[RMDB]
RNA sequence: GGGAACGACUCGAGUAGAGUCGAAAAGAAGAGCAGGCAGAUAAUCUUGUGCAGUAUGCAUGCUCGUACCUCCACACGAAGAAAGGCAGCAAAAGAAUAACUGCCACUGCACAAGUGGAGCCGCAGACCUGAGGAUCAUAUUCGUAUGAUCCUCAGGAAAAGAAACAACAACAACAAC
Reactivity to 2A3 in 0.01 (KOAc 150mM, MgCl2 10mM, bicine 150mM(pH8.5), 24C), signal-to-noise 6, nucleotides 027 to 126: g090a030a010g010a010g020c040a060g030g000c010a010g060a170u140a180a110u140c030u040u040g000u000g010c010a000g020u090a070u170g040c050a020u070g020c010u000c000g010u040a050c000c020u010c030c040a100c000a010c070g110a020a100g050a170a060a020g020g000c000a000g020c090a050a040a080a030g220a120a110u110a090a020c000u010g000c000c000a000c000u000g000c000a010c010a000a000g000u010g000g050a030g010c040c020g030c080a020g060a120
Reactivity to DMS in 0.01 (KOAc 150mM, MgCl2 10mM, bicine 150mM(pH8.5), 24C), signal-to-noise 3, nucleotides 027 to 126: g020a110a080g000a010g000c020a030g000g010c010a110g020a180u000a090a040u040c010u000u000g000u000g010c030a020g010u020a050u010g000c030a040u010g000c000u010c020g000u000a030c050c000u020c070c050a080c100a090c090g020a130a110g010a080a070a080g030g000c000a020g000c160a100a070a080a150g010a130a110u000a080a220c000u010g010c000c000a180c000u000g020c000a010c000a010a000g010u000g000g000a050g000c020c030g000c180a080g000a210